[RMDB]
RNA sequence: GGGAACGACUCGAGUAGAGUCGAAAAGACCGUGGGUUCGCCCACGGUCAAAUCCCACGAUGCGGCGCAUCGAGCCAACAAACCGACGGUCGGUCCGAACAAAAAGAGCGGUGUUCGCACCGCUCAAUCCUCAUCUAUUCUUCGGAAUAGAUGAGGAAAAAGAAACAACAACAACAAC
Reactivity to DMS in 0.01 (KOAc 150mM, MgCl2 10mM, bicine 150mM(pH8.5), 24C), signal-to-noise 2, nucleotides 027 to 126: g000a000c010c010g060u010g040g000g000u000u010c230g010c000c000c000a000c000g000g020u010c000a000a050a070u000c000c030c000a200c130g010a050u010g000c040g000g010c080g050c050a030u020c020g000a060g020c050c080a040a070c030a050a030a090c120c050g000a100c090g000g000u020c020g040g000u000c000c000g000a100a100c220a030a050a050a100a090g000a020g010c010g030g010u000g010u000u030c150g020c010a020c000c000g040c000u000c000a030a050